The record gives the reactivity of an RNA of 207 nucleotides to DMS and 2A3.
DMS adducts were read by reverse transcription with MarathonRT.
For 2A3 the reverse transcriptase was SuperScript II with manganese.
Conditions: 150 mM KOAc, 10 mM MgCl2 and 150 mM bicine (pH 8.5), 24 C.

RNA sequence: GGGAACGACUCGAGUAGAGUCGAAAAGCGAGACGGUUCGCCGUCUCGCCGCCUCCUAAGUCACCAUCGAUCUAUUUACUUCGACGAUCUAUCGGAAACGAUAGGGAGAAGAAAUAGGGAGGUGAUAUGGAUUGAGGGUUCUAUUUCGAUAGAACCCCCCAAUAUAUAGGUUCGCCUAUAUAUUGGGAAAAGAAACAACAACAACAAC
Reactivity to DMS in 0.01 (KOAc 150mM, MgCl2 10mM, bicine 150mM(pH8.5), 24C), signal-to-noise 2, nucleotides 027 to 156: g020c010g010a020g010a020c010g000g020u010u020c220g070c050c020g080u010c000u000c000g030c000c000g000c030c030u000c010c010u010a050a200g000u000c000a050c000c010a250u000c100g020a120u000c000u000a010u000u000u000a160c020u000u000c000g000a120c130g000a070u010c000u010a020u010c000g020g030a170a120a300c000g020a010u010a020g010g010g000a100g000a040a030g010a060a010a010u000a020g000g000g000a120g050g030u000g000a030u000a080u010g010g000a250u010u020g010a120g000g010g030u000u000c000u000a040u000u000u010c250g020a060u010a020g000a010a020c000c000c000
Reactivity to 2A3 in 0.01 (KOAc 150mM, MgCl2 10mM, bicine 150mM(pH8.5), 24C), signal-to-noise 6, nucleotides 027 to 156: g010c010g010a000g000a010c000g020g060u080u170c300g040c090c000g000u000c000u000c000g000c000c000g040c010c010u000c000c010u070a120a060g020u000c000a000c000c010a160u300c030g060a050u030c030u010a020u030u050u110a300c010u030u010c010g280a300c010g000a090u000c010u000a000u010c000g070g040a140a030a060c010g000a000u000a010g030g000g010a000g000a000a000g000a000a010a000u000a000g010g000g010a030g000g010u000g000a000u000a020u040g010g010a040u100u290g100a080g010g000g000u010u000c000u000a010u030u150u120c220g120a020u000a010g000a000a000c000c000c000